[RMDB]
RNA sequence: GGGAACGACUCGAGUAGAGUCGAAAAGUGUUACUAUAUGGCAACCCAAAAAAGAGUUCAAGAAGUCAGAGGGUACACAAAGGGCGGUCCCGGACAUGAAGAGCCCCAACUAGUGCAAAGUUAUGGAUGGAACAUUGUCACCAUGAAGAGUGGAGUGUCACUCCAUGUAUUUCGAUACAUGGAGUGAAAAAGAAACAACAACAACAAC
Reactivity to 2A3 in 0.01 (KOAc 150mM, MgCl2 10mM, bicine 150mM(pH8.5), 24C), signal-to-noise 3, nucleotides 027 to 156: g040u030g050u080u060a070c040u110a070u080a100u270g020g020c050a030a090c000c010c030a060a070a020a000a000a030g150a030g010u130u150c080a090a020g020a120a000g060u010c020a010g030a050g090g040g020u110a030c040a000c020a060a070a020g040g000g010c000g010g010u030c020c020c010g030g000a020c020a030u050g030a030a090g010a010g030c030c010c000c000a010a060c040u070a020g030u050g080c040a060a060a040g010u100u080a050u100g050g010a040u010g000g020a040a010c020a050u020u100g070u070c010a020c090c030a080u080g050a030a030g050a020g050u040g030g030a030g010u080g030
Reactivity to DMS in 0.01 (KOAc 150mM, MgCl2 10mM, bicine 150mM(pH8.5), 24C), signal-to-noise 3, nucleotides 027 to 156: g040u000g010u000u000a090c050u010a150u000a150u010g030g020c010a060a160c010c040c020a000a040a090a120a060a100g000a090g020u000u000c070a130a070g020a080a150g020u000c040a040g010a140g030g010g000u000a040c030a090c060a060a090a110g000g010g030c020g010g020u000c010c020c010g000g020a050c040a130u000g030a100a090g000a200g000c040c000c020c040a020a070c100u010a070g040u000g000c050a040a080a070g020u000u000a020u010g010g020a090u000g030g000a030a050c060a100u000u000g000u000c020a060c040c040a050u020g000a060a090g030a140g020u020g000g040a120g040u000g000

Conditions: 150 mM KOAc, 10 mM MgCl2 and 150 mM bicine (pH 8.5), 24 C. An RNA of 207 nucleotides, treated with 2A3 and DMS and read out base by base. DMS adducts were read by reverse transcription with MarathonRT. Reactivities are given for positions 27 through 156. The 2A3 profile rests on 2,137 reads. The data come from the RNA Mapping Database (RMDB), library OK3TST.